Chemical mapping of a 207-nucleotide RNA with 2A3.
The RNA was probed in 150 mM KOAc, 10 mM MgCl2 and 150 mM bicine (pH 8.5) at 24 C.
Values cover nucleotides 27 to 156.
RNA sequence: GGGAACGACUCGAGUAGAGUCGAAAAUUGUAUAUCAGCGCGCAGGGUGGGGCAAAUGUCCCGCGCGAUUGUCAGACUGUCAGGGUCGCCCGUAGUCCGUCGGAUGAAGUUAACGAGUACGAGGAAGAAGUCGAGAGAGUGGUCGGCAUUUACGCGCCCCGGUGGGCGAAUUCGUUCGCCCACCGGGAAAAGAAACAACAACAACAAC
Reactivity to 2A3 in 0.01 (KOAc 150mM, MgCl2 10mM, bicine 150mM(pH8.5), 24C), signal-to-noise 1, nucleotides 027 to 156: u030u060g040u080a130u030a020u150c050a030g000c000g020c020g020c060a090g100g020g030u020g030g020g000g010c040a070a110a250u300g040u010c000c000c020g000c050g010c030g030a050u000u100g000u000c040a040g030a080c030u030g070u200c050a090g020g040g070u090c150g000c020c050c000g000u000a020g020u070c060c100g110u050c080g040g040a120u090g140a110a010g080u060u180a090a030c030g000a000g050u080a030c050g000a070g060g000a010a000g070a070a000g060u090c050g000a000g000a010g000a000g080u030g000g050u010c030g010g000c000a000u030u090u030a000c030g000c000g010c020